Description:
This 177-nucleotide RNA was probed chemically with DMS and 2A3. High DMS reactivity at an A or C suggests that its Watson-Crick edge is free. Conditions: 150 mM KOAc, 10 mM MgCl2 and 150 mM bicine (pH 8.5), 24 C. For DMS, 531 sequencing reads were counted. For 2A3 the reverse transcriptase was SuperScript II with manganese.
RNA sequence: GGGAACGACUCGAGUAGAGUCGAAAAAUCAAAACUGAUAAUGAUUAAACUGACAAUGACUAGGUUCAAUCAGGAGAGAUCUCCUGAACGAGGAGAGGUCAUACUUCAAUAGGCAGCUUGGUCACUAGUAGGUGGAGUGAUUCGUCACUCCACCUACAAAAGAAACAACAACAACAAC
Reactivity to DMS in 0.01 (KOAc 150mM, MgCl2 10mM, bicine 150mM(pH8.5), 24C), signal-to-noise 1, nucleotides 027 to 126: a010u020c100a080a120a120a190c180u000g010a050u000a080a110u020g000a020u000u000a020a060a050c050u000g000a040c150a120a090u000g000a030c020u000a090g010g050u000u030c010a060a260u000c000a030g000g000a010g000a300g000a130u010c000u000c000c030u000g000a020a040c300g000a040g020g020a030g010a060g000g000u000c050a030u000a080c180u020u030c130a040a050u000a060g070g000c080a040g020c020u000u000g000g000u000c000a060c050u000a070
Reactivity to 2A3 in 0.01 (KOAc 150mM, MgCl2 10mM, bicine 150mM(pH8.5), 24C), signal-to-noise 1, nucleotides 027 to 126: a000u070c040a040a040a000a040c040u080g040a090u060a300a070u080g020a010u000u100a030a070a030c060u070g100a010c060a070a060u040g000a000c030u070a040g130g000u050u000c040a020a100u000c000a030g060g000a010g010a000g040a120u090c000u000c000c010u010g000a020a030c010g070a050g100g030a140g020a020g060g070u020c010a000u020a070c010u020u050c050a140a160u000a130g070g000c000a010g030c030u030u020g000g050u040c000a000c030u030a030